[RMDB]
RNA sequence: GGGAACGACUCGAGUAGAGUCGAAAAGUAGGUGACUGCGACCGCCACCGCGACCCGUUGCGACGGCAGAUAGGCCUCCACCGCGGCGUAACCGGCGAACAUGGGAUUUUGCAGCAGCCAAUGGCCGGUGAUUCUUAUAAUUCGUUAUAAGAAUCACAAAAGAAACAACAACAACAAC
Reactivity to 2A3 in 0.01 (KOAc 150mM, MgCl2 10mM, bicine 150mM(pH8.5), 24C), signal-to-noise 9, nucleotides 027 to 126: g150u180a080g000g040u040g040a080c040u040g020c010g030a060c000c030g010c010c010a030c030c020g020c020g050a130c000c010c010g050u060u080g020c080g020a060c060g030g010c010a010g050a160u180a070g120g020c010c010u020c030c010a050c020c020g000c030g020g000c010g020u020a060a070c030c010g020g010c030g040a050a040c050a120u160g050g040g060a110u060u090u090u200g020c030a040g000c010a020g020c010c000a050a090u100g050g010c010c000g010
Reactivity to DMS in 0.01 (KOAc 150mM, MgCl2 10mM, bicine 150mM(pH8.5), 24C), signal-to-noise 8, nucleotides 027 to 126: g000u010a050g010g020u000g000a110c060u010g010c040g000a090c110c050g000c030c020a070c040c040g000c070g000a110c120c060c020g000u000u020g010c040g000a100c150g010g000c060a060g000a140u040a080g010g010c040c020u010c050c040a100c080c040g000c050g000g000c050g030u010a080a090c100c030g000g010c040g000a070a080c090a080u020g010g000g010a120u020u010u030u010g000c050a050g010c060a100g010c020c030a050a060u020g010g000c020c030g020